Annotation: This 177-nucleotide RNA was probed chemically with 2A3 and DMS. Values cover nucleotides 27 to 126.
RNA sequence: GGGAACGACUCGAGUAGAGUCGAAAAGCAUACAUUGAUAUUUAAGUGGUGUUCCGUCACUGCUUAUUGUGGAAGCAACGUUCUGUCGUUGUGGAAACCAAUAACUGCUAACCAUGUUUUACAAUCAAGGAAUUCUAAUAUUCGUAUUAGAAUUCCUAAAAGAAACAACAACAACAAC
Reactivity to 2A3 in 0.01 (KOAc 150mM, MgCl2 10mM, bicine 150mM(pH8.5), 24C), signal-to-noise 9, nucleotides 027 to 126: g000c000a010u040a080c030a030u020u030g040a040u090a120u270u090u030a020a000g000u010g040g000u020g020u140u300c090c080g160u250c020a000c000u010g000c000u000u010a010u020u120g000u000g000g000a000a010g000c000a000a000c000g050u160u160c140u290g260u280c020g000u010u000g010u020g000g000a010a010a000c000c000a010a000u020a050a040c060u010g000c000u030a040a030c010c010a030u040g080u020u070u020u060a130c130a090a100u130c040a080
Reactivity to DMS in 0.01 (KOAc 150mM, MgCl2 10mM, bicine 150mM(pH8.5), 24C), signal-to-noise 8, nucleotides 027 to 126: g010c010a010u020a130c250a020u010u000g000a150u020a050u020u000u000a010a020g010u000g000g030u010g010u010u030c250c170g000u030c000a000c010u000g010c010u000u000a000u010u010g010u000g010g010a300a220g000c020a010a000c010g010u000u030c300u010g000u030c020g010u000u010g000u000g010g000a300a110a010c020c020a010a010u010a080a260c260u000g000c010u000a080a180c020c010a140u010g000u010u000u010u010a070c180a060a100u010c170a100